An RNA of 177 nucleotides, treated with DMS and 2A3 and read out base by base.
It was measured as part of the RMDB library OK2TRN.
2A3 adducts were read by reverse transcription with SuperScript II with manganese.
DMS adducts were read by reverse transcription with MarathonRT.
Conditions: 150 mM KOAc, 10 mM MgCl2 and 150 mM bicine (pH 8.5), 24 C.
[RMDB]
RNA sequence: GGGAACGACUCGAGUAGAGUCGAAAACAGCGGCCACAACAUGAACCCUGUCUUCAUAUACGUGGUGCCGAAGCCCUGCCCCCGCGGGCGUAUCGUGCUCCCCGGUUUGUGCGCUCGGCCGGUACGCCGAGUAAUAUUAGUUCGCUAAUAUUACUCGAAAAGAAACAACAACAACAAC
Reactivity to DMS in 0.01 (KOAc 150mM, MgCl2 10mM, bicine 150mM(pH8.5), 24C), signal-to-noise 9, nucleotides 027 to 126: c100a080g010c030g020g010c010c010a030c040a130a170c200a050u000g000a030a040c080c130c110u000g010u010c140u000u000c030a030u000a090u010a100c170g010u000g000g020u000g010c020c020g000a100a120g010c030c010c010u000g000c030c010c010c020c040g030c190g010g000g010c010g010u000a010u000c020g010u010g010c020u000c040c020c030c040g000g010u000u000u000g020u000g010c020g010c040u000c130g000g010c010c010g010g010u000a020c030g010c030
Reactivity to 2A3 in 0.01 (KOAc 150mM, MgCl2 10mM, bicine 150mM(pH8.5), 24C), signal-to-noise 9, nucleotides 027 to 126: c020a010g050c030g040g010c010c000a020c010a060a040c020a050u040g020a020a020c040c040c150u110g090u120c060u070u040c030a030u080a020u020a140c110g010u030g010g040u040g060c020c010g050a050a030g030c010c000c020u040g040c010c000c000c000c000g050c040g020g000g000c010g000u010a030u060c020g030u130g020c010u060c010c010c000c010g050g060u080u130u150g100u050g020c030g000c020u030c050g010g000c000c010g000g000u030a010c010g020c020